[RMDB]
RNA sequence: GGGAACGACUCGAGUAGAGUCGAAAAUUACUUCAGGCAGGGUCAGCUUGUUUCGUCCUUUGCCUAUCAGGCUUUCCAGAUCCUGGAUGCCCACGUCGAGAUAGAAACGGGCGAUGGCAUCGAGCUGUGCUAUAUCUACGUUCGCGUAGAUAUAGCAAAAAGAAACAACAACAACAAC
Reactivity to 2A3 in 0.01 (KOAc 150mM, MgCl2 10mM, bicine 150mM(pH8.5), 24C), signal-to-noise 4, nucleotides 027 to 126: u080u040a060c050u060u110c080a020g000g040c010a000g040g030g000u040c020a030g000c060u080u130g040u060u070u040c040g020u050c000c000u130u220u120g020c000c010u010a060u030c020a010g030g040c000u080u100u050c030c010a040g040a220u040c030c000u010g050g010a010u020g020c000c040c010a040c000g040u060c030g010a130g030a160u090a110g170a080a100a030c060g000g020g000c010g050a070u030g010g020c020a020u030c040g030a040g000c060u100g010
Reactivity to DMS in 0.01 (KOAc 150mM, MgCl2 10mM, bicine 150mM(pH8.5), 24C), signal-to-noise 5, nucleotides 027 to 126: u000u010a070c090u010u010c120a050g010g000c050a060g000g000g020u010c040a090g010c080u000u000g010u000u000u000c060g010u000c020c010u000u000u000g020c060c010u000a060u000c050a090g010g000c130u000u010u010c030c030a120g000a140u010c100c010u020g000g020a030u000g000c030c000c100a150c120g020u000c090g010a120g000a110u000a100g000a090a080a090c130g010g000g010c010g000a100u000g010g010c040a050u010c050g000a040g010c110u000g010